Chemical mapping of a 177-nucleotide RNA with DMS and 2A3. For DMS the reverse transcriptase was MarathonRT. For DMS, 8,883 sequencing reads were counted. 2A3 adducts were read by reverse transcription with SuperScript II with manganese.
RNA sequence: GGGAACGACUCGAGUAGAGUCGAAAAGUUAUUUCCAGGAUGGGCUUUAAACUCGAUGCAACAGUUCCUGGAUAUCCUAAGCUUUUCAUUACUCGUGAAGAGGCUGUAAGGCAAGUUCGAAGCUGGACAUAGAUAUAUACUUCGGUAUAUAUCUAUGAAAAGAAACAACAACAACAAC
Reactivity to DMS in 0.01 (KOAc 150mM, MgCl2 10mM, bicine 150mM(pH8.5), 24C), signal-to-noise 7, nucleotides 027 to 126: g010u010u000a080u000u000u000c010c010a020g010g010a080u000g010g000g010c020u000u010u010a080a130a160c110u010c080g010a080u010g010c090a080a090c100a100g000u010u000c000c000u000g000g000a030u000a040u000c090c090u000a090a100g010c010u000u000u000u000c020a060u000u010a130c110u000c060g010u000g010a120a100g010a060g010g010c080u000g000u010a070a080g000g020c040a080a080g010u000u000c060g010a100a140g010c030u000g010g010a300
Reactivity to 2A3 in 0.01 (KOAc 150mM, MgCl2 10mM, bicine 150mM(pH8.5), 24C), signal-to-noise 4, nucleotides 027 to 126: g010u040u020a080u110u080u010c010c000a000g030g010a020u030g030g020g060c010u100u120u180a120a140a050c060u060c130g050a060u110g010c050a130a090c020a170g060u060u060c000c000u000g000g000a010u020a030u040c000c030u040a100a040g000c000u020u020u010u000c010a010u000u100a100c020u020c020g040u040g110a120a040g000a050g100g020c010u040g020u080a060a000g030g020c030a050a030g030u000u070c040g060a060a010g080c030u020g010g000a010
The 2A3 profile rests on 3,776 reads.
It was measured as part of the RMDB library 15KREP.
The RNA was probed in 150 mM KOAc, 10 mM MgCl2 and 150 mM bicine (pH 8.5) at 24 C.